[RMDB]
RNA sequence: GGGAACGACUCGAGUAGAGUCGAAAAGAUAUGGACUCUGAUGCUACCCACCGAUAAGGUCUCGGAAACGAGACUUAUCGAGGCAUCUGUACGAGUCCUAAGUCAAAAGCAUUAGUUCGCUAAUGCAUCGAUAAAUCUUCUUCGGAAGAUUUAUCGAAAAAGAAACAACAACAACAAC
Reactivity to 2A3 in 0.01 (KOAc 150mM, MgCl2 10mM, bicine 150mM(pH8.5), 24C), signal-to-noise 4, nucleotides 027 to 126: g000a020u040a020u080g000g010a000c020u030c080u100g000a020u010g010c000u060a140c080c060c130a070c030c000g020a000u000a030a050g300g100u020c010u000c000g000g000a040a010a020c010g000a000g000a000c010u000u000a000u010c010g000a010g000g010c000a000u000c040u050g200u230a160c250g000a010g020u010c010c000u010a030a000g030u010c010a030a070a130a080g000c000a000u010u010a010g050u060u130c300g000c200u010a010a000u000g000c030a090
Reactivity to DMS in 0.01 (KOAc 150mM, MgCl2 10mM, bicine 150mM(pH8.5), 24C), signal-to-noise 6, nucleotides 027 to 126: g010a040u000a300u000g000g010a010c010u000c000u000g000a020u000g000c000u000a060c060c050c100a300c120c010g000a000u000a010a020g010g010u000c000u010c000g000g000a030a080a080c020g010a010g020a040c000u000u000a000u000c000g020a150g000g000c000a000u000c000u000g020u000a120c300g010a020g000u000c000c010u000a020a070g000u010c020a080a100a120a150g000c000a010u000u000a010g010u000u010c240g020c010u000a010a010u000g010c020a150

Chemical mapping of a 177-nucleotide RNA with 2A3 and DMS.
The 2A3 profile rests on 10,299 reads.
Reactivities are given for positions 27 through 126.
Reactivities are rounded to 0.1 and cut off at 0 and 3.
For 2A3 the reverse transcriptase was SuperScript II with manganese.
High 2A3 reactivity points to a flexible backbone, as in loops and unpaired stretches.
It was measured as part of the RMDB library TTRDES.
The DMS profile rests on 6,144 reads.